[RMDB]
RNA sequence: GGGAACGACUCGAGUAGAGUCGAAAAUAUGGGCAAUAAUGGCGAAGAGCUGAAAGCGUUCAAUGUUCGUGACGGUUAUGGCAUUCGUUGUGCGCUCACCUCUGAUAUUGAAGUCGCUAUCAUUACACAUGGGAAAAUCGUUCGCGAUUUUCCCAUGAAAAGAAACAACAACAACAAC
Reactivity to 2A3 in 0.01 (KOAc 150mM, MgCl2 10mM, bicine 150mM(pH8.5), 24C), signal-to-noise 2, nucleotides 027 to 126: u110a040u060g000g060g000c040a030a040u100a190a070u040g000g020c010g000a010a010g030a050g080c040u010g060a110a040a000g060c000g000u000u040c050a070a050u160g070u220u180c160g030u060g050a020c070g030g060u140u060a090u170g030g000c010a020u000u020c010g050u020u040g010u020g000c000g020c040u000c030a010c010c000u030c000u010g090a060u060a060u200u120g060a070a000g040u060c000g000c000u030a030u090c000a020u030u150a060c100a020
Reactivity to DMS in 0.01 (KOAc 150mM, MgCl2 10mM, bicine 150mM(pH8.5), 24C), signal-to-noise 3, nucleotides 027 to 126: u010a100u000g000g010g010c030a040a100u010a080a050u010g000g020c030g000a060a040g010a160g000c080u000g010a070a080a140g010c010g020u000u000c030a040a040u000g020u000u000c230g000u010g010a050c120g020g030u010u010a090u010g010g020c010a110u000u010c080g010u000u010g030u000g000c060g000c050u000c110a020c090c010u000c010u000g010a110u000a070u010u000g000a070a100g010u000c020g000c040u020a070u020c060a040u010u040a070c110a110

The record gives the reactivity of an RNA of 177 nucleotides to 2A3 and DMS. 2A3 adducts were read by reverse transcription with SuperScript II with manganese. The 2A3 profile rests on 1,361 reads. For DMS, 1,989 sequencing reads were counted. Values cover nucleotides 27 to 126.